[RMDB]
RNA sequence: GGGAACGACUCGAGUAGAGUCGAAAAGAUAUGGACGAUCUUCAGGGAGCCAUUGGGUCGGAAACGACCUUAUGGCAUCGAUCUGACUGGAUCGUCCUAAGUCAAACGGUCCAGUUCGCUGGACCGACAAUGGAUGGAUCUUCGGAUCCAUCCAUUGAAAAGAAACAACAACAACAAC
Reactivity to 2A3 in 0.01 (KOAc 150mM, MgCl2 10mM, bicine 150mM(pH8.5), 24C), signal-to-noise 3, nucleotides 027 to 126: g020a020u070a040u130g000g000a000c000g000a000u000c020u110u060c100a020g010g060g060a090g000c010c000a000u020u020g000g000g000u000c000g000g000a040a040a040c000g000a000c000c010u000u000a010u000g000g000c000a040u050c010g030a080u080c030u060g050a060c140u170g060g000a000u000c000g010u000c000c000u000a020a000g010u010c020a020a050a100c020g000g000u010c000c010a000g010u040u100c300g070c130u000g000g000a000c000c000g000a030
Reactivity to DMS in 0.01 (KOAc 150mM, MgCl2 10mM, bicine 150mM(pH8.5), 24C), signal-to-noise 5, nucleotides 027 to 126: g000a060u010a300u010g010g010a030c030g010a020u000c000u020u010c000a030g010g010g010a060g020c000c000a020u010u000g010g000g000u000c000g000g010a130a070a190c000g010a020c000c000u010u000a000u000g010g030c010a120u000c200g010a070u030c010u000g010a040c300u010g020g000a020u000c000g010u010c000c010u000a010a050g000u000c060a170a070a240c020g010g010u000c000c000a010g020u010u010c290g030c010u000g000g000a010c000c010g010a030

Annotation
Structure probing data (2A3 and DMS) for a 177-nucleotide construct. It was measured as part of the RMDB library TTRDES. Values are in units of 0.01, from 0 to 300, in steps of 10. For 2A3, 13,074 sequencing reads were counted.